[RMDB]
RNA sequence: GGGAACGACUCGAGUAGAGUCGAAAACUCCCAUCCAAGUCCUAUUCCAACACGUCCUCGUCGUACAGAGUGGUAACAUGUGUCACCACAUAUCCAAGCUUGGGUACACGGGCUUGACCCAACCCCUAAAACAGAGACGAGUUCGCUCGUCUCUGAACGGGUAUACCAGGUUCGCCUGGUAUACCCGAAAAGAAACAACAACAACAAC
Reactivity to 2A3 in 0.01 (KOAc 150mM, MgCl2 10mM, bicine 150mM(pH8.5), 24C), signal-to-noise 2, nucleotides 027 to 156: c010u020c000c000c010a020u050c030c070a080a070g020u030c000c020u080a110u020u100c010c010a050a030c080a060c100g060u060c030c050u090c030g070u020c000g000u030a050c050a080g050a040g120u060g050g020u050a050a000c000a160u160g070u060g010u110c060a030c060c000a000c000a030u090a030u040c030c000a060a020g010c070u060u120g010g010g020u060a000c030a010c020g000g000g000c000u070u230g070a210c020c000c000a010a080c050c000c020c010u060a100a060a000a000c000a000g000a000g000a000c020g000a000g010u040u030c100g000c080u000c000g010u010c020u000c010u000g000a000a000
Description:
The record gives the reactivity of an RNA of 207 nucleotides to 2A3. Values are in units of 0.01, from 0 to 300, in steps of 10. For 2A3 the reverse transcriptase was SuperScript II with manganese. The reactions ran in a buffer of 150 mM KOAc, 10 mM MgCl2 and 150 mM bicine (pH 8.5), at 24 C. It was measured as part of the RMDB library M2RFPK.